[RMDB]
RNA sequence: GGGAACGACUCGAGUAGAGUCGAAAAAAGGUGCCAUCAUAUCGGUUAAGAACUCUUAACUCUGAUGGCUUUCGAGUUAUGUGGUGCAUUGAAGCUCUCCCUUCAAAUGGUGGUACAGUUCCGUGAAGCAUAUUGGGGUAUUCGUACCCCAAUAUGCAAAAGAAACAACAACAACAAC
Reactivity to 2A3 in 0.01 (KOAc 150mM, MgCl2 10mM, bicine 150mM(pH8.5), 24C), signal-to-noise 1, nucleotides 027 to 126: a000a010g100g010u020g050c060c010a010u010c010a000u070a110u170c060g140g000u130u070a060a040g070a130a070c090u070c000u200u050a000a000c010u010c060u080g020a030u050g040g050c000u020u110u010c000g020a000g000u070u020a070u080g090u160g010g070u030g050c060a110u170u000g040a070a020g020c010u030c030u000c050c000c050u010u000c010a030a030a020u040g000g010u000g000g000u000a020c000a030g030u010u000c000c030g060u110g100a080a000
Reactivity to DMS in 0.01 (KOAc 150mM, MgCl2 10mM, bicine 150mM(pH8.5), 24C), signal-to-noise 4, nucleotides 027 to 126: a030a060g020g010u000g000c000c000a000u000c000a030u010a090u000c190g010g000u000u010a050a040g010a190a080c300u000c020u000u000a010a010c000u000c060u020g020a030u010g010g000c130u000u000u010c040g000a040g010u000u000a030u000g020u010g000g000u000g010c110a140u000u000g010a090a070g010c090u010c090u010c060c100c000u010u000c050a030a080a040u010g000g030u000g000g000u000a020c040a050g010u020u000c000c010g010u000g010a080a140